[RMDB]
RNA sequence: GGGAACGACUCGAGUAGAGUCGAAAAGUUAUGGAAAACGUCUUAGCUACCACUACAACAACAAUGCUGGACGGUGAUGGUUCGACUUACUCGAAACCAUCACGUAGUGGUAGUCCUUCCCAUUCAAGUAGCUAGAUUUGUUCGCAAAUCUAGCUACAAAAGAAACAACAACAACAAC
Reactivity to DMS in 0.01 (KOAc 150mM, MgCl2 10mM, bicine 150mM(pH8.5), 24C), signal-to-noise 4, nucleotides 027 to 126: g010u010u020a090u010g000g010a080a050a070a060c080g010u000c060u000u010a160g010c000u000a000c010c000a010c000u010a010c010a130a080c190a070a100c130a090a090u010g020c140u000g010g020a070c180g010g020u000g010a010u000g000g010u000u000c000g000a020c250u010u010a090c290u000c000g020a020a050a050c000c000a000u000c000a020c020g000u010a010g010u010g000g000u000a020g000u010c070c110u000u000c000c000c010a110u000u000c070a080a140
Reactivity to 2A3 in 0.01 (KOAc 150mM, MgCl2 10mM, bicine 150mM(pH8.5), 24C), signal-to-noise 3, nucleotides 027 to 126: g030u050u060a070u210g130g040a110a090a050a050c030g100u030c040u050u070a040g000c000u000a010c000c010a000c000u010a010c020a140a000c010a000a000c040a160a200u250g080c070u110g150g070a080c110g040g000u010g000a000u000g000g000u000u020c000g000a020c060u100u250a090c050u090c020g020a070a050a050c000c000a000u000c000a000c010g000u000a000g000u000g000g000u000a000g000u010c010c010u000u000c000c000c000a000u060u110c040a070a020